The record gives the reactivity of an RNA of 177 nucleotides to 2A3 and DMS.
For 2A3, 843 sequencing reads were counted.
RNA sequence: GGGAACGACUCGAGUAGAGUCGAAAAGAACAGAUUGCCGCACUGGCUGCCCUGAUGAGAACAAACCCGUGACUAGCGUCGAAACAUCAACAGUGCGGGCUGUUGGUGUCGGGAGCCACUAAAAGAACCAUGCGACCGUAUUCGUACGGUCGCAUGGAAAAGAAACAACAACAACAAC
Reactivity to 2A3 in 0.01 (KOAc 150mM, MgCl2 10mM, bicine 150mM(pH8.5), 24C), signal-to-noise 2, nucleotides 027 to 126: g040a090a000c020a030g080a070u030u210g120c020c000g050c000a010c080u060g040g000c050u160g150c000c000c000u070g000a070u010g010a120g060a160a010c060a020a020a020c040c050c010g030u080g070a050c080u060a020g000c040g130u100c060g140a130a010a030c060a020u000c000a000a030c010a020g070u020g060c000g000g000g020c040u000g000u050u000g050g070u010g020u000c000g080g000g010a000g040c040c000a020c060u110a000a090a070a000g000a030a000
Reactivity to DMS in 0.01 (KOAc 150mM, MgCl2 10mM, bicine 150mM(pH8.5), 24C), signal-to-noise 1, nucleotides 027 to 126: g000a030a170c080a000g010a110u000u000g020c070c000g080c110a200c110u000g040g030c030u050g010c040c000c100u040g030a130u050g000a100g000a120a060c180a070a070a200c020c060c010g000u000g000a100c120u090a150g110c060g000u030c020g000a190a150a090c000a000u030c060a000a000c000a020g000u030g080c110g020g000g000c030u000g000u000u000g000g000u000g040u000c150g000g030g020a100g000c010c050a160c090u000a000a080a060a070g000a180a130
Conditions: 150 mM KOAc, 10 mM MgCl2 and 150 mM bicine (pH 8.5), 24 C.